An RNA of 177 nucleotides, treated with DMS and 2A3 and read out base by base.
Reactivities are given for positions 27 through 126.
Conditions: 150 mM KOAc, 10 mM MgCl2 and 150 mM bicine (pH 8.5), 24 C.
For DMS, 45,847 sequencing reads were counted.
The 2A3 profile rests on 3,337 reads.

RNA sequence: GGGAACGACUCGAGUAGAGUCGAAAAGGGAGUUUGUUUUCCCGGCGCCAUUUUGCUGGACUUCUACGAGGCGCUUCGGAGGGGUUAGUAUUAGAGAGUAAAAGUUAGGAAAUGUCUUUAAUAUACGCAGUGAUGACAUCUUCGGAUGUCAUUAUUGAAAAGAAACAACAACAACAAC
Reactivity to DMS in 0.01 (KOAc 150mM, MgCl2 10mM, bicine 150mM(pH8.5), 24C), signal-to-noise 9, nucleotides 027 to 126: g010g000g000a110g000u020u010u030g000u010u000u020u000c010c000c040g010g010c080g020c030c040a040u020u020u030u020g020c060u010g010g000a080c060u010u020c030u010a090c060g000a080g000g010c060g010c040u010u010c060g010g010a070g000g010g010g010u010u010a080g010u010a040u010u010a030g000a040g000a070g010u010a060a060a060a100g000u010u020a090g010g000a070a070a070u030g010u000c010u000u000u010a030a040u010a060u020a090c180g010
Reactivity to 2A3 in 0.01 (KOAc 150mM, MgCl2 10mM, bicine 150mM(pH8.5), 24C), signal-to-noise 2, nucleotides 027 to 126: g020g010g000a020g000u010u070u040g010u000u020u010u000c000c000c000g010g000c000g020c010c010a030u050u070u040u150g010c010u040g000g030a030c000u030u000c010u020a060c020g010a010g010g010c020g000c000u020u040c030g020g000a030g010g010g010g010u050u040a020g000u020a030u010u050a040g020a000g010a000g060u070a020a050a100a040g030u050u110a050g000g100a030a100a090u120g010u020c000u000u040u030a090a040u090a030u020a060c060g000